[RMDB]
RNA sequence: GGGAACGACUCGAGUAGAGUCGAAAAUGGCUGAUUGAGGAACAAUGCGUCAACCUGGGUUCUCCUGAUGAAGGCGGCAGGUGGAGACGGAUCCGGGUCCGGGACCCAUCUCGAGUUGGAGUCAAAGGAUCGUCCCAUCAUUCGUGAUGGGACGAUCAAAAGAAACAACAACAACAAC
Reactivity to DMS in 0.01 (KOAc 150mM, MgCl2 10mM, bicine 150mM(pH8.5), 24C), signal-to-noise 1, nucleotides 027 to 126: u050g010g010c150u000g000a070u020u000g000a160g000g080a110a060c160a140a050u010g000c020g000u000c010a060a060c000c000u040g000g000g050u010u000c010u010c020c060u000g000a150u010g000a060a080g010g020c010g000g030c030a010g000g000u000g000g000a150g000a130c050g000g000a000u000c040c030g020g060g000u000c000c070g040g000g050a070c030c000c000a060u100c000u010c020g000a140g000u000u000g010g040a190g000u040c040a080a080a100g020
This 177-nucleotide RNA was probed chemically with DMS. Values cover nucleotides 27 to 126. The reactions ran in a buffer of 150 mM KOAc, 10 mM MgCl2 and 150 mM bicine (pH 8.5), at 24 C. For DMS, 1,221 sequencing reads were counted.